[RMDB]
RNA sequence: GGGAACGACUCGAGUAGAGUCGAAAAGCUCGGAGGUUCGCCUCCGAGCAAAUAAAAAUAGCUGGAAAACGAGCAAAACCAGCAAAAUACAUAAGGCUCGAAAAACACAACAGUUCGCUGUUGUGAACUCUUGAGUAAAGUUCGCUUUACUCAAGAGAAAAGAAACAACAACAACAAC
Reactivity to DMS in 0.01 (KOAc 150mM, MgCl2 10mM, bicine 150mM(pH8.5), 24C), signal-to-noise 1, nucleotides 027 to 126: g010c010u030c000g050g010a010g000g010u000u030c200g010c020c020u000c000c010g000a010g030c000a020a050a010u010a020a080a040a210a070u000a270g000c020u000g000g010a100a070a090a050c000g000a010g010c010a110a090a090a080c000c000a000g000c010a070a010a060a120u010a070c100a090u000a090a060g010g010c000u020c010g000a080a040a040a110a200c010a000c000a000a000c000a030g000u000u030c240g010c000u000g000u000u010g000u010g000a060a100
Reactivity to 2A3 in 0.01 (KOAc 150mM, MgCl2 10mM, bicine 150mM(pH8.5), 24C), signal-to-noise 1, nucleotides 027 to 126: g000c000u010c020g030g010a010g050g020u050u110c170g050c050c000u000c000c000g000a000g010c000a000a000a000u000a010a020a000a000a010u050a020g010c000u000g000g000a060a060a070a110c000g010a000g000c040a090a050a010a060c000c000a000g010c030a110a210a050a010u150a050c070a040u180a030a090g080g020c010u000c000g000a080a020a000a000a010c010a000c010a010a000c000a000g020u060u070c130g100c100u010g000u000u000g000u000g000a020a000
Chemical mapping of a 177-nucleotide RNA with DMS and 2A3. Values cover nucleotides 27 to 126. DMS (dimethyl sulfate) methylates the pairing face of unpaired adenines and cytosines. The reactions ran in a buffer of 150 mM KOAc, 10 mM MgCl2 and 150 mM bicine (pH 8.5), at 24 C. It was measured as part of the RMDB library M2PK50. For DMS, 1,318 sequencing reads were counted.